The data come from the RNA Mapping Database (RMDB), library OK2TRN. Chemical mapping of a 177-nucleotide RNA with DMS and 2A3. Reactivities are rounded to 0.1 and cut off at 0 and 3. The 2A3 profile rests on 13,779 reads. For DMS the reverse transcriptase was MarathonRT. The RNA was probed in 150 mM KOAc, 10 mM MgCl2 and 150 mM bicine (pH 8.5) at 24 C. 2A3 adducts were read by reverse transcription with SuperScript II with manganese.
RNA sequence: GGGAACGACUCGAGUAGAGUCGAAAACAGGGGAACAUAUUCAAAGAUCCAUUCCUUUGGAUGAACGUGGAAGGAAACGUGGAACAAGUAAAGAUCUUAUGUUCAAGGCCCUGAGCGAAAGGGGUUAGCCUAAAUAGAAGUUCGCUUCUAUUUAGGCAAAAGAAACAACAACAACAAC
Reactivity to DMS in 0.01 (KOAc 150mM, MgCl2 10mM, bicine 150mM(pH8.5), 24C), signal-to-noise 7, nucleotides 027 to 126: c050a060g000g000g010g010a070a040c060a040u000a060u010u010c180a090a070a050g010a050u010c040c090a300u000u010c090c030u010u010u010g010g010a100u010g010a090a040c080g010u000g010g010a130a110g000g010a040a060a030c080g020u000g010g020a080a090c080a030a050g010u010a080a120a110g000a050u000c030u000u000a030u000g010u000u000c030a100a130g020g000c020c010c010u010g010a080g020c100g010a030a050a100g000g000g000g010u010u000a120
Reactivity to 2A3 in 0.01 (KOAc 150mM, MgCl2 10mM, bicine 150mM(pH8.5), 24C), signal-to-noise 7, nucleotides 027 to 126: c020a000g020g010g020g010a000a020c010a040u070a060u110u220c050a110a060a040g020a030u010c020c020a070u050u100c020c000u070u040u070g140g020a120u120g050a060a040c050g040u060g080g040a080a070g050g060a110a080a030c050g030u050g030g040a060a030c030a060a040g060u130a160a050a030g020a010u010c000u040u080a040u060g020u010u020c040a030a020g090g010c000c000c010u010g010a030g050c080g120a060a020a030g010g010g000g000u020u040a010